[RMDB]
Structure probing data (DMS and 2A3) for a 177-nucleotide construct. The DMS profile rests on 1,914 reads. The data come from the RNA Mapping Database (RMDB), library M2PK50.

RNA sequence: GGGAACGACUCGAGUAGAGUCGAAAACGGCCUGGCUUCGGCCAGGCCGAAAGAAGCAUUUUACGCCAAGAAAUCCCGGAACAUUGGCCCGGAAGCCUGAGAAAAGAGUACUGUUCGCAGUACUCAACUUAAUACUCUGGUUCGCCAGAGUAUUAAGAAAAGAAACAACAACAACAAC
Reactivity to DMS in 0.01 (KOAc 150mM, MgCl2 10mM, bicine 150mM(pH8.5), 24C), signal-to-noise 2, nucleotides 027 to 126: c000g020g000c000c010u000g030g010c000u010u020c150g040g020c000c000a030g000g000c020c000g000a000a020a070g010a130a160g030c030a060u000u000u010u020a070c140g030c020c020a020a080g000a110a130a110u000c020c010c000g010g000a040a060c110a120u000u000g000g010c010c070c050g010g020a120a100g010c060c050u010g000a100g000a060a090a060a100g020a010g000u000a000c000u010g000u000u010c150g010c010a000g000u000a010c000u000c010a010a080
Reactivity to 2A3 in 0.01 (KOAc 150mM, MgCl2 10mM, bicine 150mM(pH8.5), 24C), signal-to-noise 1, nucleotides 027 to 126: c000g020g000c030c000u000g000g000c040u050u070c260g100g040c030c000a000g000g000c020c010g000a020a010a000g000a030a000g020c000a000u020u080u080u110a060c080g010c010c020a000a050g040a140a100a060u030c050c030c020g000g010a070a040c070a170u100u140g000g000c000c000c080g080g010a060a010g030c030c120u170g030a080g130a070a130a050a060g020a020g030u010a000c000u000g080u090u060c240g000c070a010g020u010a020c000u020c000a000a010